[RMDB]
RNA sequence: GGGAACGACUCGAGUAGAGUCGAAAAGAAACCUUGGAAUGCCGCCUCAGUUCCAAGCUCUUUCGUGGCACUGUAAACAGUCCUAUUGAGUUAGGGGCAGUCAACCACGUUGCGAAGCUAAAUUAUCGAUCGUUCAUACUUUCGAGUAUGAACGAUCAAAAGAAACAACAACAACAAC
Reactivity to DMS in 0.01 (KOAc 150mM, MgCl2 10mM, bicine 150mM(pH8.5), 24C), signal-to-noise 3, nucleotides 027 to 126: g000a050a090a100c050c020u010u000g000g000a010a010u000g000c090c080g010c040c010u010c050a220g000u020u010c010c000a030a060g000c060u000c020u010u000u020c000g030u000g010g000c090a030c000u000g010u000a040a090a160c290a080g000u060c000c000u000a010u000u020g020a200g000u000u000a000g000g010g020g000c000a030g000u000c050a050a130c020c000a000c010g000u000u000g000c100g010a090a060g000c050u020a050a040a070u010u030a110u010c220
Reactivity to 2A3 in 0.01 (KOAc 150mM, MgCl2 10mM, bicine 150mM(pH8.5), 24C), signal-to-noise 6, nucleotides 027 to 126: g050a030a050a000c050c010u010u010g010g020a080a020u060g060c050c020g030c040c000u040c020a040g030u040u000c010c000a030a000g000c000u010c000u000u030u010c010g000u000g000g010c080a000c020u030g030u100a110a210a040c040a070g090u050c020c000u050a080u030u150g180a240g210u040u060a010g010g010g010g020c000a000g010u010c000a000a060c000c000a020c020g010u020u070g060c140g110a080a030g020c040u070a120a090a110u170u100a150u180c080